[RMDB]
Structure probing data (2A3) for a 177-nucleotide construct. For 2A3 the reverse transcriptase was SuperScript II with manganese. The RNA was probed in 150 mM KOAc, 10 mM MgCl2 and 150 mM bicine (pH 8.5) at 24 C. Reactivities are given for positions 27 through 126.
RNA sequence: GGGAACGACUCGAGUAGAGUCGAAAAACAGCACUGAUACGUCAGUGCUGAAGGGUGUUGAUCAGCAGAUCAGGACUGUAACUCACCAUAGUGGUGGACUGCCCUGAUCUGGAGACCACUGCCUUAACCUACCGGCCCUAUUCGUAGGGCCGGUAGGAAAAGAAACAACAACAACAAC
Reactivity to 2A3 in 0.01 (KOAc 150mM, MgCl2 10mM, bicine 150mM(pH8.5), 24C), signal-to-noise 2, nucleotides 027 to 126: a020c010a000g030c010a010c000u030g040a000u050a120c300g190u070c000a000g000u010g000c000u000g010a000a000g020g010g000u120g000u210u190g120a220u010c020a010g230c000a000g010a000u000c000a000g000g000a000c000u020g030u110a180a100c040u070c090a000c000c000a010u160a250g250u300g060g000u000g000g030a030c000u010g000c000c000c010u010g000a000u000c000u000g000g000a000g000a000c000c000a000c050u030g050c010c000u140u170a100a040